[RMDB]
Description:
This 177-nucleotide RNA was probed chemically with DMS and 2A3. Values are in units of 0.01, from 0 to 300, in steps of 10. 2A3 adducts were read by reverse transcription with SuperScript II with manganese. Values cover nucleotides 27 to 126. The data come from the RNA Mapping Database (RMDB), library OK1LIB. For 2A3, 6,541 sequencing reads were counted. Conditions: 150 mM KOAc, 10 mM MgCl2 and 150 mM bicine (pH 8.5), 24 C.
RNA sequence: GGGAACGACUCGAGUAGAGUCGAAAACAAUCGGCCCUGCCACUUCACAUUCUGGAAUUUUGCGAAUUGGCCUCGUGCCUCAAUAUCCUGGGCAAGGGACUCCAAGAGAAUCAGUAACUCCAGUCAUAGUACUAAUCCAGUUCGCUGGAUUAGUACUAAAAGAAACAACAACAACAAC
Reactivity to DMS in 0.01 (KOAc 150mM, MgCl2 10mM, bicine 150mM(pH8.5), 24C), signal-to-noise 2, nucleotides 027 to 126: c090a110a090u040c160g000g000c000c090c060u010g000c020c050a030c040u000u000c030a080c060a110u050u020c060u000g000g000a040a090u000u020u010u000g000c060g000a020a040u020u000g020g000c200c000u000c130g010u020g020c010c030u000c140a020a160u020a040u040c070c030u000g030g020g030c050a100a090g000g010g010a010c050u000c020c040a000a120g000a060g020a090a100u000c040a060g000u020a030a070c040u000c000c010a040g000u020c120a150u040
Reactivity to 2A3 in 0.01 (KOAc 150mM, MgCl2 10mM, bicine 150mM(pH8.5), 24C), signal-to-noise 7, nucleotides 027 to 126: c040a010a100u120c020g070g020c020c010c000u040g020c030c010a050c020u080u090c040a030c010a100u070u040c020u050g030g040a090a090u030u080u100u180g050c050g030a090a090u040u040g020g000c000c010u030c060g070u090g010c020c000u070c030a040a050u120a080u180c020c040u050g000g000g030c020a050a040g030g000g000a040c030u000c050c000a100a000g060a010g040a120a080u110c020a020g040u050a030a030c010u000c010c010a010g030u070c030a070u030